Conditions: 150 mM KOAc, 10 mM MgCl2 and 150 mM bicine (pH 8.5), 24 C. An RNA of 207 nucleotides, treated with 2A3 and read out base by base. It was measured as part of the RMDB library VIROID. Values are in units of 0.01, from 0 to 300, in steps of 10.
RNA sequence: GGGAACGACUCGAGUAGAGUCGAAAACCACGCAAAGCCUGCGUGCAGGCGGGGUACGUGCCGCGGGGCACAACUGGUCGAGAGUUGGCCUGCUCUCCUGAUGAGCCCAUGGCAAGGCAAAGCCAGUGUGGUACGGUAUGGCAAGGCUUGCCUCGGACAAAUCCACCUUCUUCGGAAGGUGGAUUUGAAAAGAAACAACAACAACAAC
Reactivity to 2A3 in 0.01 (KOAc 150mM, MgCl2 10mM, bicine 150mM(pH8.5), 24C), signal-to-noise 2, nucleotides 027 to 156: c020c000a000c040g090c010a070a060a010g000c020c020u030g030c130g140u130g110c060a050g090g000c070g050g010g010g020u160a050c060g000u000g000c000c000g080c040g120g050g010g070c000a040c020a130a110c100u070g110g080u180c020g020a000g010a040g070u120u270g020g010c020c000u000g020c010u050c000u000c050c000u160g100a200u110g090a090g010c000c010c010a030u000g000g030c060a040a060g110g080c050a070a110a000g000c060c030a140g030u070g040u130g100g010u040a010c020g000g050u170a070u110g000g030c040a120a150g000g030c000u020u040g050c030c010u000c000g040g020a030